Structure probing data (DMS and 2A3) for a 177-nucleotide construct. The data come from the RNA Mapping Database (RMDB), library OK2TST. DMS adducts were read by reverse transcription with MarathonRT. Conditions: 150 mM KOAc, 10 mM MgCl2 and 150 mM bicine (pH 8.5), 24 C. Values cover nucleotides 27 to 126.
RNA sequence: GGGAACGACUCGAGUAGAGUCGAAAAGGCGGCACACUGCCCAAUCGCUCUUUUUCCGCUGCGUCGGCUGUUGACUCCGACGGUUUCACACUUGUUUCACCCAAGAAACGGUCUCCGCGGACGCGCGAGAUCCCCACUUAUUCGUAAGUGGGGAUCUAAAAGAAACAACAACAACAAC
Reactivity to DMS in 0.01 (KOAc 150mM, MgCl2 10mM, bicine 150mM(pH8.5), 24C), signal-to-noise 3, nucleotides 027 to 126: g010g020c050g010g000c210a070c150a080c100u010g010c030c010c020a090a170u010c090g000c040u000c010u000u010u000u020u000c050c060g020c060u030g010c030g020u010c020g010g050c090u000g010u000u000g000a090c060u000c040c020g010a070c070g000g000u000u020u010c070a100c120a060c060u000u020g010u000u010u000c020a090c030c050c060a120a130g000a020a010a040c020g000g000u000c040u000c040c110g010c020g010g000a060c120g030c030g000c070g010
Reactivity to 2A3 in 0.01 (KOAc 150mM, MgCl2 10mM, bicine 150mM(pH8.5), 24C), signal-to-noise 2, nucleotides 027 to 126: g020g000c010g010g050c060a030c000a010c130u110g030c000c000c030a030a090u040c010g000c020u050c000u000u040u000u060u040c040c020g010c080u130g010c020g020u000c000g150g030c050u090g050u230u150g040a050c030u000c000c070g060a030c100g010g000u010u090u120c100a090c000a000c010u050u210g020u030u130u040c090a080c020c030c020a090a050g050a060a050a000c020g000g000u050c040u020c040c030g010c030g030g010a030c030g000c000g000c000g020